[RMDB]
RNA sequence: GGGAACGACUCGAGUAGAGUCGAAAAGGAAAUGUCGAAGGAUGAUGUCCACCACGCCGUGCUGUCACGUUCUCGGUACCCUCGAUUUCCGUCUCUUCUUGCAUGCGUAUCCAACCGCCUCGCGGCUAGUAGUUUACUAGUUCGCUAGUAAACUACUAAAAGAAACAACAACAACAAC
Reactivity to DMS in 0.01 (KOAc 150mM, MgCl2 10mM, bicine 150mM(pH8.5), 24C), signal-to-noise 8, nucleotides 027 to 126: g010g000a040a060a070u010g010u010c030g010a110a080g010g010a090u010g010a090u010g010u000c040c020a090c040c050a090c130g010c110c060g000u010g010c090u010g010u010c050a090c070g000u000u000c030u000c040g010g010u000a090c060c020c010u000c040g000a130u010u000u000c020c010g010u000c030u000c020u000u000c030u000u000g010c110a040u000g010c040g000u000a090u000c030c050a090a120c080c050g010c020c050u000c200g010c100g000g010c110u000
Reactivity to 2A3 in 0.01 (KOAc 150mM, MgCl2 10mM, bicine 150mM(pH8.5), 24C), signal-to-noise 8, nucleotides 027 to 126: g050g010a050a030a040u150g020u060c040g040a080a030g060g020a040u080g020a050u080g060u020c020c010a020c020c010a050c070g050c050c030g050u040g020c050u060g040u090c020a020c070g040u090u000c030u010c010g010g040u060a070c020c000c000u020c030g080a090u040u020u020c030c010g040u010c010u000c000u050u010c020u020u040g020c040a070u100g020c010g030u040a120u010c010c010a010a070c030c030g020c020c040u050c070g050c040g010g010c010u010